Structure probing data (2A3 and DMS) for a 177-nucleotide construct. For 2A3 the reverse transcriptase was SuperScript II with manganese.
RNA sequence: GGGAACGACUCGAGUAGAGUCGAAAAGAUAUGGAGGAGCCACUAAUCAACAGCUAUGCUCGGAAACGAGCAUAGACAUGAUUGGUGGACCCUCCUCCUAAGUCAAACGUCGUCUUCGGACGACGAACCAUCUGGUUAUGUUCGCAUAACCAGAUGGAAAAGAAACAACAACAACAAC
Reactivity to 2A3 in 0.01 (KOAc 150mM, MgCl2 10mM, bicine 150mM(pH8.5), 24C), signal-to-noise 3, nucleotides 027 to 126: g020a050u130a070u300g000g000a000g000g010a030g050c010c000a000c010u020a020a000u010c000a030a180c040a150g020c010u010a000u020g000c000u000c000g020g030a130a120a050c010g000a000g000c010a000u000a000g020a020c010a080u090g000a000u010u010g000g000u010g000g010a000c010c000c010u000c000c000u000c000c000u040a170a040g110u060c090a140a110a100c010g000u000c000g000u010c010u020u050c280g160g010a000c010g000a010c000g000a010a030
Reactivity to DMS in 0.01 (KOAc 150mM, MgCl2 10mM, bicine 150mM(pH8.5), 24C), signal-to-noise 4, nucleotides 027 to 126: g000a070u010a240u000g010g000a000g010g010a090g040c000c000a010c010u000a000a010u000c000a030a110c300a230g000c000u000a000u000g000c020u000c000g000g000a130a090a230c000g000a020g000c000a010u000a010g000a010c110a180u000g000a010u000u000g010g020u000g010g000a040c080c180c000u000c000c000u000c010c010u000a050a110g000u000c120a130a080a220c010g020u000c010g010u000c000u000u010c220g020g000a020c000g000a000c000g000a060a150

For DMS the reverse transcriptase was MarathonRT. For 2A3, 12,470 sequencing reads were counted.